[RMDB]
RNA sequence: GGGAACGACUCGAGUAGAGUCGAAAAUCGUGUCGUACGAGAUGCUACAUAGCUUAUAAAAGUAAGCAAUAAACUAAGCAUACAGGUCGACACAUCUCUGUUCCGUCAUACGUAUACGGAAGAAAGUUACGAGUAACAAGUUCGCUUGUUACUCGUAAAAAGAAACAACAACAACAAC
Reactivity to 2A3 in 0.01 (KOAc 150mM, MgCl2 10mM, bicine 150mM(pH8.5), 24C), signal-to-noise 4, nucleotides 027 to 126: u080c030g000u000g000u000c010g070u140a060c050g030a080g010a300u010g000c010u000a050c030a110u110a080g000c000u010u000a010u040a080a210a090a040g070u010a020a000g020c000a000a190u110a130a080a030c140u090a040a040g000c000a000u080a070c040a050g140g180u020c010g010a000c000a000c010a040u000c020u030c010u030g130u030u000c000c000g000u020c040a060u100a280c050g110u200a070u010a180c000g000g000a010a010g010a020a170a010g040u060
Reactivity to DMS in 0.01 (KOAc 150mM, MgCl2 10mM, bicine 150mM(pH8.5), 24C), signal-to-noise 2, nucleotides 027 to 126: u010c190g050u000g000u000c000g050u000a060c000g040a250g010a010u000g000c000u000a180c210a070u000a190g030c000u000u000a010u040a090a170a060a250g010u010a010a000g000c020a070a080u010a100a100a090c210u000a060a050g000c010a010u010a070c050a100g030g000u030c010g010a000c000a000c030a040u000c010u000c000u010g040u000u000c010c000g000u000c180a130u000a120c240g040u000a090u000a000c010g000g030a060a020g000a010a030a110g030u000
This 177-nucleotide RNA was probed chemically with 2A3 and DMS. For DMS the reverse transcriptase was MarathonRT. The reactions ran in a buffer of 150 mM KOAc, 10 mM MgCl2 and 150 mM bicine (pH 8.5), at 24 C. 2A3 adducts were read by reverse transcription with SuperScript II with manganese.